Annotation
Structure probing data (DMS and 2A3) for a 177-nucleotide construct. 2A3 adducts were read by reverse transcription with SuperScript II with manganese. Conditions: 150 mM KOAc, 10 mM MgCl2 and 150 mM bicine (pH 8.5), 24 C. 2A3 is a SHAPE reagent: it acylates the 2'-hydroxyl of flexible nucleotides of all four kinds. Values are in units of 0.01, from 0 to 300, in steps of 10. For DMS the reverse transcriptase was MarathonRT. The DMS profile rests on 648 reads. The data come from the RNA Mapping Database (RMDB), library RFMREP.
[RMDB]
RNA sequence: GGGAACGACUCGAGUAGAGUCGAAAAGAUGAGAAGCUUCGACCAAGGUUCGACUCGAGCGCCAGCGAGAGAGCGUUGCCGCAGGCAACGACCCGAAGGGCGAAGCGCGCAGCGCUGAGUAAUCCUUUCCUAUUAUGUUCUUCGGAACAUAAUAGGAAAAAGAAACAACAACAACAAC
Reactivity to DMS in 0.01 (KOAc 150mM, MgCl2 10mM, bicine 150mM(pH8.5), 24C), signal-to-noise 1, nucleotides 027 to 126: g030a110u000g000a120g050a180a180g030c100u000u000c030g000a080c070c050a110a170g000g000u000u000c040g000a100c040u000c000g020a100g010c010g030c100c170a180g020c010g010a140g030a070g010a070g000c000g080u010u000g000c010c020g050c270a100g030g000c030a020a040c050g000a050c040c040c000g010a100a070g000g020g000c020g050a110a010g000c020g000c090g010c140a110g020c050g010c060u000g010a150g010u000a120a170u000c010c020u000u070
Reactivity to 2A3 in 0.01 (KOAc 150mM, MgCl2 10mM, bicine 150mM(pH8.5), 24C), signal-to-noise 1, nucleotides 027 to 126: g070a040u110g090a070g060a230a020g060c030u060u030c040g080a080c030c000a080a080g090g020u110u160c070g000a010c020u020c000g050a020g030c020g040c020c010a040g070c000g020a070g000a010g010a010g240c000g000u000u010g060c030c000g300c150a070g080g000c000a000a010c040g040a040c020c030c020g020a090a040g010g000g010c040g000a040a000g000c000g000c000g020c030a080g060c010g030c020u040g010a030g080u040a040a090u010c000c000u020u050